[RMDB]
An RNA of 170 nucleotides, treated with 2A3 and DMS and read out base by base. For DMS, 3,909 sequencing reads were counted. Conditions: 150 mM KOAc, 10 mM MgCl2 and 150 mM bicine (pH 8.5), 24 C. It was measured as part of the RMDB library 15KLIB. Reactivities are given for positions 27 through 129. For 2A3, 3,716 sequencing reads were counted.

RNA sequence: GGGAACGACUCGAGUAGAGUCGAAAACUCCGAUCCGAUGGGGCCCUGGACCCCUCAGCUCUGGAGACUUCCGACCUGUGAGGUCGAGGAUUCCCCGUGGAGGGAGACAGCCACCGGGAUAGGACAGAUGGCCCCCGCUUCGGCGGGGGCAAAAGAAACAACAACAACAAC
Reactivity to 2A3 in 0.01 (KOAc 150mM, MgCl2 10mM, bicine 150mM(pH8.5), 24C), signal-to-noise 2, nucleotides 027 to 129: c000u000c000c020g050a110u010c000c030g010a090u130g000g000g000g000c050c020c010u060g080g020a080c010c000c030c000u000c000a050g010c020u000c000u140g000g000a150g010a070c020u010u000c000c000g020a030c000c000u000g110u130g180a120g020g000u010c020g010a010g000g000a010u050u020c040c000c000c000g010u080g030g010a040g010g000g000a050g010a010c000a010g050c010c030a060c010c000g030g000g000a040u040a040g000g000a020c010a050g080a040u050g010
Reactivity to DMS in 0.01 (KOAc 150mM, MgCl2 10mM, bicine 150mM(pH8.5), 24C), signal-to-noise 4, nucleotides 027 to 129: c050u020c000c040g020a140u010c060c000g030a000u110g000g000g170g000c300c010c000u040g000g000a160c060c050c000c000u000c050a030g000c150u000c010u140g140g020a060g000a120c110u040u030c000c000g000a030c130c040u060g000u000g040a040g050g020u040c000g000a010g020g020a080u070u000c000c000c020c050g050u000g090g020a050g000g020g000a060g000a220c090a170g000c030c090a100c030c000g020g000g000a070u070a080g010g010a030c190a000g010a120u080g000